[RMDB]
Structure probing data (2A3 and DMS) for a 177-nucleotide construct.
RNA sequence: GGGAACGACUCGAGUAGAGUCGAAAAGCGGGGUCGGGGGGCGCGGGCGCCAAGCGGGCCACCGUCAGCGAGUUCGUGCAAGUCAAACACAUUGACCGCGUGGGCCCCGCUGGCGUUUCGCCGGCGCAUUUGAAUAGGAGUUCGCUCCUAUUCAAAUAAAAGAAACAACAACAACAAC
Reactivity to 2A3 in 0.01 (KOAc 150mM, MgCl2 10mM, bicine 150mM(pH8.5), 24C), signal-to-noise 6, nucleotides 027 to 126: g050c020g000g010g000g050u110c040g000g050g000g000g000g000c030g010c020g010g010g000c000g000c000c000a060a020g000c000g000g000g010c000c030a070c010c030g080u070c020a020g010c010g050a090g060u070u090c050g010u050g040c070a130a090g070u140c050a070a100a030c070a030c010a170u040u110g010a020c020c020g010c030g010u050g010g040g020c050c000c000c000g000c000u000g000g000c010g000u030u050u110c030g000c010c010g010g000c050g000c020
Reactivity to DMS in 0.01 (KOAc 150mM, MgCl2 10mM, bicine 150mM(pH8.5), 24C), signal-to-noise 7, nucleotides 027 to 126: g010c050g010g000g010g020u020c070g020g000g000g010g010g020c090g010c060g000g010g000c010g010c010c010a050a060g030c020g010g000g000c020c030a030c050c010g000u010c030a030g010c070g020a170g010u010u010c050g000u010g020c160a090a130g020u020c070a070a030a100c100a080c090a080u010u000g000a010c080c120g020c100g010u000g010g000g010c120c010c020c030g010c000u000g000g000c020g000u000u010u020c060g010c030c070g000g010c060g010c100

Background
Values cover nucleotides 27 to 126.